[RMDB]
RNA sequence: GGGAACGACUCGAGUAGAGUCGAAAACGACUUACCUUCGGGUAAGUCGACAAAGGUGAGUUCAUCGGAUAGCUGCCUAGGUGAGUUCAUCGGAUAGCUGCCACAUGUAACGGUUCGCCGUUACAAACUCCUGCAGCAUGUUCGCAUGCUGCAGGAGAAAAGAAACAACAACAACAAC
Reactivity to DMS in 0.01 (KOAc 150mM, MgCl2 10mM, bicine 150mM(pH8.5), 24C), signal-to-noise 1, nucleotides 027 to 126: c000g000a010c000u000u000a010c000c000u000u000c220g060g030g000u000a000a010g000u000c010g020a080c150a050a230a100g010g010u000g020a020g000u000u000c050a000u000c020g000g000a060u000a070g000c060u000g030c080c070u010a150g020g010u000g000a070g000u000u010c050a010u000c010g020g010a120u000a060g000c090u000g020c030c050a060c150a140u000g000u010a030a000c000g010g020u000u000c300g040c000c000g000u000u010a000c000a040a100a090
Reactivity to 2A3 in 0.01 (KOAc 150mM, MgCl2 10mM, bicine 150mM(pH8.5), 24C), signal-to-noise 1, nucleotides 027 to 126: c000g010a000c000u000u000a000c000c010u000u050c170g060g000g000u000a000a000g000u030c000g000a010c000a020a050a020g050g020u040g020a060g010u040u030c040a040u000c020g040g030a070u070a130g000c070u130g040c090c030u100a100g060g000u020g000a040g010u050u000c000a010u000c040g010g010a050u060a040g040c030u070g040c050c000a030c030a160u100g000u000a010a010c010g000g040u030u050c180g040c060c010g000u000u000a000c000a000a000a010